Structure probing data (2A3 and DMS) for a 177-nucleotide construct. For 2A3, 25,861 sequencing reads were counted. Values cover nucleotides 27 to 126. High 2A3 reactivity points to a flexible backbone, as in loops and unpaired stretches. The RNA was probed in 150 mM KOAc, 10 mM MgCl2 and 150 mM bicine (pH 8.5) at 24 C. It was measured as part of the RMDB library OK1LIB. For 2A3 the reverse transcriptase was SuperScript II with manganese.
RNA sequence: GGGAACGACUCGAGUAGAGUCGAAAACAGGCGUGUCGGCUGCAAAGGAUGUUUGGGUGGACGCGGCGCCUUCCGCGCGCGGCAGCGUAUCUCGAAUAUUUUCCCGUUGGUGGGACCUUGGGCGCGGUCUAGUCAGCGGGUUCGCUCGUUGGCUAGAAAAAGAAACAACAACAACAAC
Reactivity to 2A3 in 0.01 (KOAc 150mM, MgCl2 10mM, bicine 150mM(pH8.5), 24C), signal-to-noise 9, nucleotides 027 to 126: c030a000g030g010c030g010u070g020u060c010g020g020c000u040g010c040a030a030a030g050g020a040u050g050u040u030u040g040g000g000u040g030g030a010c010g000c000g010g010c010g010c000c000u110u050c040c050g010c000g000c000g000c000g040g030c020a040g000c000g010u030a050u020c030u010c020g050a060a020u080a080u060u060u040u030c010c010c010g010u040u080g040g060u100g010g010g010a040c010c010u020u060g030g010g000c020g000c010g000g000
Reactivity to DMS in 0.01 (KOAc 150mM, MgCl2 10mM, bicine 150mM(pH8.5), 24C), signal-to-noise 9, nucleotides 027 to 126: c090a080g000g010c040g020u010g010u010c050g000g010c020u000g010c070a060a100a100g000g010a060u010g010u000u010u000g000g000g010u010g010g000a070c040g010c030g000g000c050g010c020c030u020u020c080c100g010c080g010c020g000c040g000g010c030a080g000c030g010u000a110u010c010u000c030g000a050a050u010a070u010u010u010u010c010c000c010g010u010u010g000g020u020g010g010g000a100c080c030u010u000g000g010g010c030g010c030g000g000